RNA sequence: GGGAACGACUCGAGUAGAGUCGAAAAAGAUAGAGAAGGUUAUAGCAGACUAUAGAUUAAUUAGUUGAAAGUUUUGUGUUGUAAUGUAUAGUGUUGGAGAAAGUGAAAGACUUGCGGAAGUAAUUGCUCCUUCGGAAAAUUUCGAUUUUCCGAAGGAAAAAGAAACAACAACAACAAC
Reactivity to DMS in 0.01 (KOAc 150mM, MgCl2 10mM, bicine 150mM(pH8.5), 24C), signal-to-noise 1, nucleotides 027 to 126: a110g010a070u000a110g000a070g010a060a070g000g020u010u030a060u010a070g000c040a070g000a020c000u020a050u020a100g020a120u000u000a030a070u020u020a050g030u000u010g030a110a120a110g020u020u050u010u020g020u010g010u000u000g040u030a020a080u020g010u000a050u020a020g000u000g000u020u000g000g000a060g010a030a030a060g010u000g000a040a100a090g000a020c040u000u010g010c150g000g000a050a240g000u010a040a060u040u010g000c120
Structure probing data (DMS) for a 177-nucleotide construct. The reactions ran in a buffer of 150 mM KOAc, 10 mM MgCl2 and 150 mM bicine (pH 8.5), at 24 C. For DMS, 1,560 sequencing reads were counted.